[RMDB]
An RNA of 177 nucleotides, treated with DMS and 2A3 and read out base by base.
DMS adducts were read by reverse transcription with MarathonRT.
The data come from the RNA Mapping Database (RMDB), library OK2TRN.
RNA sequence: GGGAACGACUCGAGUAGAGUCGAAAAGGAGUCCGCGUGAUGGCUCUUGGCUACGGGCCAUGGUGUCAGGAUCACCCCGCUGUGAUCAAAGAUCAAGCGUCACCGGUGUCGGCGUGCCAUGCCAGCGCGAGGAGAAGGUAUUCGUACCUUCUCCUCGAAAAGAAACAACAACAACAAC
Reactivity to DMS in 0.01 (KOAc 150mM, MgCl2 10mM, bicine 150mM(pH8.5), 24C), signal-to-noise 5, nucleotides 027 to 126: g010g010a120g020u010c030c020g020c060g020u000g010a090u000g010g000c010u010c070u000u010g020g020c020u000a070c120g000g020g020c010c010a050u000g000g010u000g020u000c090a160g020g010a200u000c080a100c050c020c090c080g000c060u010g000u000g010a020u000c020a110a110a140g010a060u000c070a100a050g010c050g010u000c040a040c050c050g010g010u010g010u000c040g010g000c040g000u000g000c030c020a060u010g010c010c000a090g000c060g000
Reactivity to 2A3 in 0.01 (KOAc 150mM, MgCl2 10mM, bicine 150mM(pH8.5), 24C), signal-to-noise 4, nucleotides 027 to 126: g110g020a060g090u030c030c020g010c060g030u060g110a140u060g030g000c020u020c000u090u040g040g000c020u080a040c050g040g020g010c020c010a040u090g030g000u050g030u070c080a050g040g110a060u080c020a070c000c000c020c060g000c170u210g030u050g090a030u030c100a270a160a080g060a070u080c060a070a030g030c030g050u060c020a010c030c020g030g040u100g060u100c040g050g080c070g050u040g000c020c000a030u040g010c010c020a040g000c030g000